RNA sequence: GGGAACGACUCGAGUAGAGUCGAAAAGAUAUGGAUGAUACUUCCGCCGCCCAAGGGUCGCAGGAGCUCGGAAACGAGCUCCGGUAAUUCCCUUGGGCGGAACUACGGAAGGUAUCAUCCUAAGUCAGAUAUGUGGAUAGUUCGCUAUCCACAUAUCAAAAGAAACAACAACAACAAC
Reactivity to DMS in 0.01 (KOAc 150mM, MgCl2 10mM, bicine 150mM(pH8.5), 24C), signal-to-noise 3, nucleotides 027 to 126: g010a040u000a300u010g000g010a020u000g010a030u000a030c000u000u000c010c000g020c000c010g010c000c010c000a020a020g000g000g020u010c300g020c070a040g000g000a010g020c000u000c000g000g000a070a090a200c000g000a000g000c000u000c000c010g000g040u000a090a170u000u010c000c000c000u000u000g000g000g000c000g000g000a010a020c120u020a300c030g010g000a030a020g020g020u010a000u000c000a010u000c010c000u000a010a080g000u000c040a180
Reactivity to 2A3 in 0.01 (KOAc 150mM, MgCl2 10mM, bicine 150mM(pH8.5), 24C), signal-to-noise 1, nucleotides 027 to 126: g040a010u060a020u170g020g000a000u000g010a000u000a000c010u010u000c010c000g020c030c000g010c000c000c000a020a000g120g030g020u250c210g040c170a100g030g000a010g000c030u000c020g060g000a070a110a070c020g000a020g000c030u020c020c010g020g000u010a000a040u200u140c000c010c000u000u000g010g000g010c000g000g000a000a010c000u160a040c010g010g030a020a070g070g040u010a000u000c000a000u000c000c000u010a020a020g040u000c050a010
The record gives the reactivity of an RNA of 177 nucleotides to DMS and 2A3. The RNA was probed in 150 mM KOAc, 10 mM MgCl2 and 150 mM bicine (pH 8.5) at 24 C. 2A3 adducts were read by reverse transcription with SuperScript II with manganese. It was measured as part of the RMDB library TTRINS.